[RMDB]
RNA sequence: GGGAACGACUCGAGUAGAGUCGAAAAGGUCAAUGCUUCGGCAUUGACCAAAAUAAUAAAGGCGAAACGUCAACGCCCUAGACACUAGAAAAAGACGAAAAAAAAGAAAGAGCUUCGGCUCUUUCAACACUAGAUACAUCUUCGGAUGUAUCUAGUGAAAAGAAACAACAACAACAAC
Reactivity to 2A3 in 0.01 (KOAc 150mM, MgCl2 10mM, bicine 150mM(pH8.5), 24C), signal-to-noise 2, nucleotides 027 to 126: g000g000u010c000a000a020u010g000c000u080u120c300g060g000c010a000u000u020g020a000c000c000a010a000a000a000u030a000a000u110a070a130a030g020g010c010g030a080a110a060c000g060u000c020a060a050c040g020c000c040c000u030a030g070a100c100a110c150u050a030g120a000a070a020a020a000g030a000c040g150a120a050a010a010a000a000a000a030g010a000a000a000g000a000g000c030u100u120c300g110g000c010u000c000u000u000u000c000a000a000
Reactivity to DMS in 0.01 (KOAc 150mM, MgCl2 10mM, bicine 150mM(pH8.5), 24C), signal-to-noise 1, nucleotides 027 to 126: g000g000u000c020a010a010u000g020c000u000u010c300g070g010c020a000u000u000g000a020c000c000a000a010a030a040u020a100a080u010a080a180a130g000g010c010g010a080a080a040c030g020u000c010a060a090c000g010c000c000c080u000a080g030a190c120a100c110u000a000g000a020a010a040a060a170g010a060c010g000a000a020a010a070a090a080a200a150g000a020a000a010g000a050g000c000u000u020c210g050g020c000u030c000u000u000u000c020a080a170